[RMDB]
The record gives the reactivity of an RNA of 207 nucleotides to 2A3 and DMS. It was measured as part of the RMDB library OK3TST. The reactions ran in a buffer of 150 mM KOAc, 10 mM MgCl2 and 150 mM bicine (pH 8.5), at 24 C. DMS adducts were read by reverse transcription with MarathonRT. The DMS profile rests on 4,583 reads.
RNA sequence: GGGAACGACUCGAGUAGAGUCGAAAAUAAAUACCUUCGCGGCGAGACCUUUAAUGAGAUCGUAAAACAAGUUAUGCUCUUGAUCCCACAUAUCGUAUUUGGCACCACCACCUACCAUAGCCAUGUGUUGACGGACCAACUUAUAAGCAGGAGGCACUAGGUUGAAGAAAUUCGUUUCUUCAACCUAAAAAGAAACAACAACAACAAC
Reactivity to 2A3 in 0.01 (KOAc 150mM, MgCl2 10mM, bicine 150mM(pH8.5), 24C), signal-to-noise 4, nucleotides 027 to 156: u130a000a050a020u140a050c010c000u020u060c070g010c030g030g030c020g010a030g030a070c000c000u120u110u210a140a100u210g020a040g020a080u050c060g030u050a040a040a060a070c060a020a040g030u080u090a060u110g050c030u010c020u080u070g020a070u070c000c060c010a060c020a080u170a030u080c050g050u060a130u070u050u040g030g000c000a010c030c000a020c020c020a040c010c010u050a040c030c010a040u060a030g060c020c000a030u060g030u010g030u050u070g030a060c020g020g000a020c010c010a020a030c040u100u100a050u020a230a030g020c010a010g010g010a000g020g000c030a000c050
Reactivity to DMS in 0.01 (KOAc 150mM, MgCl2 10mM, bicine 150mM(pH8.5), 24C), signal-to-noise 2, nucleotides 027 to 156: u010a110a070a120u000a150c020c010u000u000c050g020c050g030g000c040g020a060g010a080c010c030u010u010u000a080a090u000g020a050g000a080u000c030g000u000a060a050a060a130c100a080a150g020u010u000a090u000g040c020u000c050u010u010g000a070u010c020c000c010a060c080a080u000a060u000c070g010u000a100u000u000u000g010g030c000a120c000c000a070c060c010a030c030c020u010a040c010c010a100u000a090g000c050c020a050u000g020u010g000u000u000g030a140c100g000g000a060c030c030a040a040c090u000u000a030u000a060a060g010c010a060g030g000a110g030g030c000a080c150